[RMDB]
RNA sequence: GGGAACGACUCGAGUAGAGUCGAAAAGCAAACAUUCAGUUGCUCAGUUGGUUAGUUACCUUUCUGAACGCUGUAAUGUUAUUGCUGAUUCUAAGUCCUUCACACUUAUCUUUGGUGGCGUAGCUUAGGUACAAGACAUCUUCGGAUGUCUUGUACCAAAAGAAACAACAACAACAAC
Reactivity to DMS in 0.01 (KOAc 150mM, MgCl2 10mM, bicine 150mM(pH8.5), 24C), signal-to-noise 3, nucleotides 027 to 126: g020c000a020a040a030c000a010u000u000c010a000g000u000u000g080c020u000c000a020g010u000u010g000g010u000u000a200g010u020u010a080c010c000u010u000u010c000u000g010a010a020c000g000c000u000g010u010a020a010u000g010u000u000a070u000u010g010c000u000g000a210u010u000c060u000a050a140g010u010c070c020u010u000c100a100c080a050c060u000u000a080u010c150u000u000u000g020g010u000g000g010c120g000u000a050g010c050u000u000a100
Reactivity to 2A3 in 0.01 (KOAc 150mM, MgCl2 10mM, bicine 150mM(pH8.5), 24C), signal-to-noise 2, nucleotides 027 to 126: g000c000a020a040a000c000a010u020u010c010a000g010u100u250g280c010u000c000a030g000u010u010g000g010u030u050a040g030u120u140a050c000c000u030u090u050c010u000g000a010a000c020g010c020u010g030u300a010a010u010g000u030u050a090u060u060g000c000u000g020a030u040u000c040u090a070a010g030u050c010c010u030u030c030a030c000a010c030u150u150a110u300c120u100u090u130g010g010u070g030g000c080g050u060a010g030c010u080u080a050